[RMDB]
RNA sequence: GGGAACGACUCGAGUAGAGUCGAAAAGAUAUGGACCUAGACAUGCGUCGUGUCGGAAACGACACCAGACGCAACAGCUAGAGUCCUAAGUCAAAGAUAUUUUGCGAGUUCGCUCGCAAAAUAUCAAGCAUGGAUAAUUGUUCGCAAUUAUCCAUGCAAAAGAAACAACAACAACAAC
Reactivity to 2A3 in 0.01 (KOAc 150mM, MgCl2 10mM, bicine 150mM(pH8.5), 24C), signal-to-noise 3, nucleotides 027 to 126: g040a010u080a050u130g000g010a010c000c000u000a000g040a080c050a110u090g010c010g010u000c010g000u000g010u000c010g010g050a060a060a050c000g000a000c010a010c020c050a030g010a010c000g000c010a000a010c030a010g020c000u010a010g050a090g080u010c000c000u020a110a010g050u020c040a060a090a050g000a000u000a010u010u010u000u010g000c000g000a010g030u030u160c250g100c150u000c000g000c000a000a010a000a000u000a000u000c000a010a000
Reactivity to DMS in 0.01 (KOAc 150mM, MgCl2 10mM, bicine 150mM(pH8.5), 24C), signal-to-noise 5, nucleotides 027 to 126: g010a030u010a300u010g010g010a000c000c000u000a010g010a060c080a250u000g020c010g010u000c000g000u010g010u000c000g000g000a070a080a160c000g000a030c000a000c050c210a120g020a020c000g000c000a010a050c270a150g010c000u000a000g000a170g000u000c000c000u000a030a070g000u000c020a060a140a120g000a010u000a000u000u000u000u010g010c000g000a030g010u000u010c220g010c000u010c000g010c000a010a000a000a010u000a000u000c000a090a090